[RMDB]
RNA sequence: GGGAACGACUCGAGUAGAGUCGAAAACUGGGCACUGCUACCGUGCGGUGCUCCUCAAGGGUCUGUUCUUGGACCGUGGCCAUUCGAAGUAUUUCUCGAUGGCCCAACACGUAGCUUUCAACAGGCGGCAUCCCGCCUAGUUCGCUAGGCGGGAUGCAAAAGAAACAACAACAACAAC
Reactivity to 2A3 in 0.01 (KOAc 150mM, MgCl2 10mM, bicine 150mM(pH8.5), 24C), signal-to-noise 3, nucleotides 027 to 126: c010u000g010g020g000c030a000c010u000g000c000u190a270c180c060g180u220g020c010g000g000u000g020c010u050c010c000u150c030a120a250g040g020g000u000c010u000g100u100u000c020u100u100g000g020a040c010c010g110u130g000g000c030c040a120u220u120c060g020a130a000g080u130a230u150u190u060c070u000c000g000a000u000g000g000c000c000c020a050a070c020a010c100g070u100a050g050c000u040u070u210c060a010a020c020a030g010g010c010g020